[RMDB]
RNA sequence: GGGAACGACUCGAGUAGAGUCGAAAAACGCUUUUCAUAUUAGGCAGUGCAGUGAAGUACUGCCAGAUUUCGCUGUCCAGGCCUGUCUUGGCAAUUUCUUCACGAAGAAUCGCAUCAGAUUCACGAAAUCCCACCCGUGGUUCGCCACGGGUGGGAUAAAAGAAACAACAACAACAAC
Reactivity to 2A3 in 0.01 (KOAc 150mM, MgCl2 10mM, bicine 150mM(pH8.5), 24C), signal-to-noise 1, nucleotides 027 to 126: a000c030g000c070u030u090u080u080c060a000u000a050u230u250a120g000g000c060a050g100u080g020c010a060g050u000g100a150a010g020u020a020c000u000g020c000c020a000g000a000u100u230u050c090g000c030u040g170u120c040c000a010g000g010c040c040u000g000u000c030u020u110g000g010c000a000a030u020u080u090c030u000u000c110a080c000g030a160a030g090a080a040u000c040g050c090a120u060c130a230g130a070u000u000c000a030c030g060a130a050
Conditions: 150 mM KOAc, 10 mM MgCl2 and 150 mM bicine (pH 8.5), 24 C. This 177-nucleotide RNA was probed chemically with 2A3. 2A3 adducts were read by reverse transcription with SuperScript II with manganese. As a SHAPE reagent, 2A3 marks flexible, mostly unpaired nucleotides at the ribose 2'-OH. Values cover nucleotides 27 to 126.